[RMDB]
RNA sequence: GGGAACGACUCGAGUAGAGUCGAAAAGCUGGAUGGCUAUCACGUGUUAGAGGGUCAGCGUGGCUACGGAGAGCGCUAUGGCGUAUUACGCACCAUGGCCGAUGAACUGCGUCUCUACGCCCUAGCCAUGGGAGUAGCUGUUCGCAGCUACUCCCAUAAAAGAAACAACAACAACAAC
Reactivity to DMS in 0.01 (KOAc 150mM, MgCl2 10mM, bicine 150mM(pH8.5), 24C), signal-to-noise 2, nucleotides 027 to 126: g020c040u000g030g000a070u000g010g000c020u000a050u000c070a090c160g020u010g020u000u010a060g000a110g010g000g000u010c130a060g010c050g000u000g000g020c040u000a070c140g010g000a150g000a130g010c140g010c030u000a000u010g000g010c030g040u000a080u010u010a060c120g000c040a060c050c010a040u000g000g010c070c040g010a100u000g000a060a110c090u000g000c040g010u010c080u000c040u000a030c050g000c020c040c090u000a040g000c060c100
Reactivity to 2A3 in 0.01 (KOAc 150mM, MgCl2 10mM, bicine 150mM(pH8.5), 24C), signal-to-noise 2, nucleotides 027 to 126: g010c040u050g060g050a080u080g070g000c010u030a030u100c030a030c110g080u090g060u150u120a100g010a070g040g110g020u090c070a010g020c030g010u020g010g000c000u010a010c030g050g000a090g010a010g070c110g000c020u030a020u070g040g000c010g020u050a070u080u210a060c110g000c020a030c010c010a030u020g060g000c050c010g050a070u070g000a080a030c040u060g000c010g060u010c020u010c010u060a000c000g030c000c000c000u010a000g000c000c000

Structure probing data (DMS and 2A3) for a 177-nucleotide construct. Values cover nucleotides 27 to 126. 2A3 adducts were read by reverse transcription with SuperScript II with manganese.